[RMDB]
Structure probing data (DMS and 2A3) for a 177-nucleotide construct. DMS adducts were read by reverse transcription with MarathonRT. The 2A3 profile rests on 3,675 reads.
RNA sequence: GGGAACGACUCGAGUAGAGUCGAAAAUUAAGAAAUGGUGAUAUAGCGAUUCGAGUGAGUGAAUUUCAGGCGUCACUAUUUUCUACUGUCAAGGAACAGGAUACGCUAGCGCCAGUUUCUGACACACGCGAUAUAGUCGAUUCGUCGACUAUAUCGCAAAAGAAACAACAACAACAAC
Reactivity to DMS in 0.01 (KOAc 150mM, MgCl2 10mM, bicine 150mM(pH8.5), 24C), signal-to-noise 2, nucleotides 027 to 126: u070u050a140a050g010a010a060a030u000g000g020u000g000a100u030a050u040a000g000c000g030a170u030u040c050g020a140g010u020g000a070g080u010g010a000a040u020u000u030c210a040g040g000c140g000u000c010a010c020u000a140u000u000u000u010c040u040a100c090u020g000u060c200a120a110g000g000a040a060c070a070g000g010a030u000a020c000g050c010u000a040g030c030g000c000c000a020g000u020u000u000c000u000g000a120c200a090c210a110c260
Reactivity to 2A3 in 0.01 (KOAc 150mM, MgCl2 10mM, bicine 150mM(pH8.5), 24C), signal-to-noise 5, nucleotides 027 to 126: u170u100a110a000g030a010a010a000u010g020g030u010g060a130u060a080u020a200g020c000g050a040u040u030c070g020a050g120u090g030a050g030u140g060a100a120u100u200u210c100a150g160g000c070g050u010c020a010c000u010a090u030u080u010u030c030u040a040c050u080g090u060c110a190a130g080g000a030a040c030a010g000g000a030u130a190c040g000c090u070a050g140c020g000c040c010a010g090u000u010u000c000u000g020a000c000a010c010a010c180